[RMDB]
RNA sequence: GGGAACGACUCGAGUAGAGUCGAAAAAAUGAUACCUUAGUCUCUGCUUGCCUUUAUCAAAACCUUUAUGAUUGGCCGGGCACAGUGGCCCAUGCCUAUAAUCCUAGCAUUUUGGGAGGCUGAGGCAGGAAGAUCACCUGAGCCCAGAAGUUGGAGACUACAGUCCAAUAUUCGUAUUGGACUGUAGAAAAGAAACAACAACAACAAC
Reactivity to DMS in 0.01 (KOAc 150mM, MgCl2 10mM, bicine 150mM(pH8.5), 24C), signal-to-noise 1, nucleotides 027 to 156: a040a060u010g000a110u000a150c050c040u010u010a020g030u000c020u020c010u000g000c040u000u000g000c030c020u000u020u000a110u010c060a170a030a070a070c080c030u000u000u000a060u020g010a050u000u000g010g000c000c300g030g030g030c000a060c030a150g010u030g030g020c000c030c000a090u010g030c000c000u000a090u010a070a050u010c010c030u010a050g060c130a260u000u000u010u000g000g060g010a080g000g030c070u000g000a050g010g030c010a040g000g030a130a090g000a130u010c020a040c060c020u020g000a170g000c050c000c030a090g000a010a280g030u000u000g020g000a050g020a150
Reactivity to 2A3 in 0.01 (KOAc 150mM, MgCl2 10mM, bicine 150mM(pH8.5), 24C), signal-to-noise 2, nucleotides 027 to 156: a000a000u220g050a070u120a120c020c030u060u070a030g000u010c000u000c000u040g050c040u050u120g080c030c020u160u190u080a110u180c060a030a040a120a180c060c060u170u210u090a180u170g030a030u000u070g000g000c030c050g030g000g020c030a030c020a140g080u120g050g070c010c000c000a010u090g010c000c000u090a130u080a130a010u010c040c100u060a060g070c080a200u110u090u070u080g020g010g000a000g000g030c030u030g020a010g010g000c030a010g000g020a090a080g010a080u070c000a010c030c020u050g050a030g010c080c030c010a010g050a100a000g040u130u170g040g030a030g020a000

Source information
Source: RMDB library OK3TST, as collected in RNAgym. This 207-nucleotide RNA was probed chemically with DMS and 2A3. The 2A3 profile rests on 809 reads. For 2A3 the reverse transcriptase was SuperScript II with manganese. The RNA was probed in 150 mM KOAc, 10 mM MgCl2 and 150 mM bicine (pH 8.5) at 24 C.